[RMDB]
Notes:
The data come from the RNA Mapping Database (RMDB), library OK3TST. The record gives the reactivity of an RNA of 207 nucleotides to DMS and 2A3. 2A3 adducts were read by reverse transcription with SuperScript II with manganese. The RNA was probed in 150 mM KOAc, 10 mM MgCl2 and 150 mM bicine (pH 8.5) at 24 C. The DMS profile rests on 1,546 reads. DMS (dimethyl sulfate) methylates the pairing face of unpaired adenines and cytosines.
RNA sequence: GGGAACGACUCGAGUAGAGUCGAAAAUGACUUCCUCUGGGCUCCCCAGGAAGAGCUUUAGAACAAAGAAUGGUGCUCAGAGUUCAGAUCUCAGAUAAGGGGCAGCUGAGGACCUCAGCCAUGGAUCCUCAGAGUGGAUCCAUUGGAUGGGGGUCCACCGUGCUAGUACUUUCGAGUACUAGCACGGAAAAGAAACAACAACAACAAC
Reactivity to DMS in 0.01 (KOAc 150mM, MgCl2 10mM, bicine 150mM(pH8.5), 24C), signal-to-noise 1, nucleotides 027 to 156: u010g000a100c090u000u010c040c020u000c080u010g000g010g000c030u000c030c020c060c020a200g000g010a080a110g000a120g040c080u000u000u020a080g000a020a200c080a050a080a130g000a110a180u000g000g000u000g030c030u000c060a140g010a200g000u020u010c010a110g020a120u000c020u010c050a110g020a160u000a080a070g020g020g110g000c030a140g000c020u000g000a100g050g020a300c030c010u000c030a030g000c010c000a040u000g010g000a000u030c010c000u010c130a280g000a250g000u020g030g000a040u000c000c010a020u000u000g000g000a020u020g020g060g040g050g040u000c000c000a120
Reactivity to 2A3 in 0.01 (KOAc 150mM, MgCl2 10mM, bicine 150mM(pH8.5), 24C), signal-to-noise 3, nucleotides 027 to 156: u080g010a020c040u060u020c010c020u040c030u040g040g020g000c010u040c020c020c000c020a010g030g070a040a070g020a030g020c020u060u080u110a070g020a070a040c040a040a030a020g050a100a100u120g100g040u150g060c030u030c040a030g030a010g080u000u010c020a050g010a170u020c030u000c010a030g020a140u110a150a090g000g000g010g020c080a030g000c020u040g040a100g000g000a000c000c000u020c000a010g020c010c000a000u000g000g000a020u010c020c030u060c090a070g020a040g240u110g020g000a010u000c030c000a010u070u180g020g000a020u040g030g000g000g010g030u000c000c010a000